Overview: Structure probing data (DMS and 2A3) for a 177-nucleotide construct. Values cover nucleotides 27 to 126. For DMS the reverse transcriptase was MarathonRT.

RNA sequence: GGGAACGACUCGAGUAGAGUCGAAAAAGUGAGUCAUACGUGACUCACAGGGGUCACCUGUCUGGCCAGCUACGUCCCCACGGCCCUUGUCAGUGUGGAAGGUAGACGGCCAGAGAGGUGACCCCAACAUUGGGGAAUAGUUCGCUAUUCCCCAAUGAAAAGAAACAACAACAACAAC
Reactivity to DMS in 0.01 (KOAc 150mM, MgCl2 10mM, bicine 150mM(pH8.5), 24C), signal-to-noise 5, nucleotides 027 to 126: a090g000u000g000a010g000u000c000a040u010a120c190g010u010g010a010c000u000c000a000c010a040g010g000g000g010u000c010a010c010c010u000g000u010c000u000g000g000c000c000a160g010c000u000a000c000g000u000c010c000c030c000a020c000g010g000c020c300c160u020u040g020u000c010a120g040u010g010u010g000g000a040a040g010g020u000a000g000a080c030g010g000c000c000a000g000a010g000a010g010g000u000g000a000c000c000c000c000a000a010
Reactivity to 2A3 in 0.01 (KOAc 150mM, MgCl2 10mM, bicine 150mM(pH8.5), 24C), signal-to-noise 8, nucleotides 027 to 126: a000g010u000g000a000g000u000c010a010u020a100c300g110u030g000a000c000u000c000a000c000a000g000g000g000g000u000c000a000c000c000u080g220u040c000u000g000g000c000c000a020g020c000u000a000c000g080u020c010c010c010c000a000c000g030g000c020c000c110u200u300g030u050c140a270g000u010g000u040g000g020a050a050g190g000u000a000g020a080c010g000g000c000c000a000g000a000g000a000g000g000u000g000a000c000c000c000c000a000a000
For 2A3 the reverse transcriptase was SuperScript II with manganese.